[RMDB]
RNA sequence: GGGAACGACUCGAGUAGAGUCGAAAAAAAAGAUAUGGAUGCGUGAACUACGAAUUUCGGGUUUGUUUGACGCUCGUCGGAAACGACGAGCCGAGAACCUUCGAUUCGCACGCAUCCUAAGUCAAAACAGUUCUAUAUACUUCGGUAUAUAGAACUGAAAAGAAACAACAACAACAAC
Reactivity to DMS in 0.01 (KOAc 150mM, MgCl2 10mM, bicine 150mM(pH8.5), 24C), signal-to-noise 6, nucleotides 027 to 126: a060a050a060a090g020a030u010a300u020g000g000a010u000g000c000g030u000g000a100a060c180u020a300c020g000a020a020u000u000u000c270g000g010g010u000u000u000g000u010u020u010g000a270c300g000c000u000c000g030u000c000g010g000a080a090a160c000g010a010c000g010a010g000c000c000g000a090g000a010a010c000c020u000u000c200g000a020u000u010c010g000c030a000c010g000c000a010u000c000c010u000a000a060g020u000c020a080a080a100a160
Reactivity to 2A3 in 0.01 (KOAc 150mM, MgCl2 10mM, bicine 150mM(pH8.5), 24C), signal-to-noise 4, nucleotides 027 to 126: a000a000a000a010g070a020u080a020u100g010g000a000u000g000c010g010u010g020a130a110c160u190a050c300g020a010a010u010u020u070c030g000g020g040u030u120u090g210u140u160u180g080a000c020g000c010u000c000g000u000c010g020g000a060a030a030c000g010a000c000g000a000g000c000c000g020a020g010a010a010c010c010u030u030c010g010a010u020u010c000g000c010a000c010g000c000a000u010c000c000u010a010a000g010u000c020a010a000a080a150
Conditions: 150 mM KOAc, 10 mM MgCl2 and 150 mM bicine (pH 8.5), 24 C.
An RNA of 177 nucleotides, treated with DMS and 2A3 and read out base by base.
The 2A3 profile rests on 11,158 reads.
2A3 is a SHAPE reagent: it acylates the 2'-hydroxyl of flexible nucleotides of all four kinds.